[RMDB]
RNA sequence: GGGAACGACUCGAGUAGAGUCGAAAAUGGCAACACUUUCGAAUUGCGGGGACGUCCUUAGAGCUCAGUUCUACCAACCAGUGAGGGAAACCUCCGCUGGGGCCUAUGCUAAAAACAUGGGAGAUGGUAAGAAGGAACUGAGAUUGGAUAAUCCGCACAGUAUGGGAUUGUUCGCAAUCCCAUACUGAAAAGAAACAACAACAACAAC
Reactivity to 2A3 in 0.01 (KOAc 150mM, MgCl2 10mM, bicine 150mM(pH8.5), 24C), signal-to-noise 2, nucleotides 027 to 156: u140g090g000c070a120a070c040a090c150u120u110u130c060g090a120a150u070u020g000c000g020g000g000g030a020c040g000u050c000c020u120u220a170g030a030g170c000u000c000a000g000u000u000c000u010a000c000c010a010a020c010c000a010g000u000g020a020g030g010g000a040a040a030c000c010u020c040c070g000c000u000g000g030g000g000c000c000u010a000u000g010c010u070a040a010a030a030a050c010a000u020g010g030g010a030g080a300u040g010g010u020a030a000g020a000a000g050g010a000a010c000u000g010a000g000a000u010u140g000g000a000u020a050a000u030c000c000g000c000a000
Description
An RNA of 207 nucleotides, treated with 2A3 and read out base by base. The RNA was probed in 150 mM KOAc, 10 mM MgCl2 and 150 mM bicine (pH 8.5) at 24 C. 2A3 adducts were read by reverse transcription with SuperScript II with manganese.